[RMDB]
RNA sequence: GGGAACGACUCGAGUAGAGUCGAAAAGUUUCCGCGCGGAAACCUGAUCGGCAUCCCGGGUGCGCCGGAGCGGAUGGUGCAGAACACCUCCACCGACGCGAACUGGACGGUGUGUGACGGCCUCAACAUACCCUACGCUAUUCGUAGCGUAGGGUAUAAAAGAAACAACAACAACAAC
Reactivity to DMS in 0.01 (KOAc 150mM, MgCl2 10mM, bicine 150mM(pH8.5), 24C), signal-to-noise 3, nucleotides 027 to 126: g000u000u000u000c000c010g010c260g060c160g000g000a030a030a040c030c010u000g000a110u000c030g030g000c030a060u000c060c020c040g040g000g010u010g010c040g000c020c000g010g020a070g000c120g030g020a050u020g050g010u000g000c060a140g000a100a300c020a050c000c000u000c030c000a030c030c030g000a020c040g000c010g000a050a140c050u000g000g000a080c160g020g000u000g010u000g000u000g000a180c100g000g000c030c000u000c070a040a080c140
Reactivity to 2A3 in 0.01 (KOAc 150mM, MgCl2 10mM, bicine 150mM(pH8.5), 24C), signal-to-noise 2, nucleotides 027 to 126: g000u000u000u000c000c000g050c070g020c080g020g080a080a030a060c000c030u030g040a130u050c030g060g000c000a040u000c020c010c050g000g020g000u160g000c010g000c000c000g010g000a060g240c130g040g020a090u230g020g040u020g000c120a050g070a190a010c010a010c010c000u000c010c010a020c000c010g030a030c020g010c000g030a100a060c030u020g010g040a030c090g000g000u000g000u000g030u030g000a040c000g030g000c000c020u060c030a080a100c020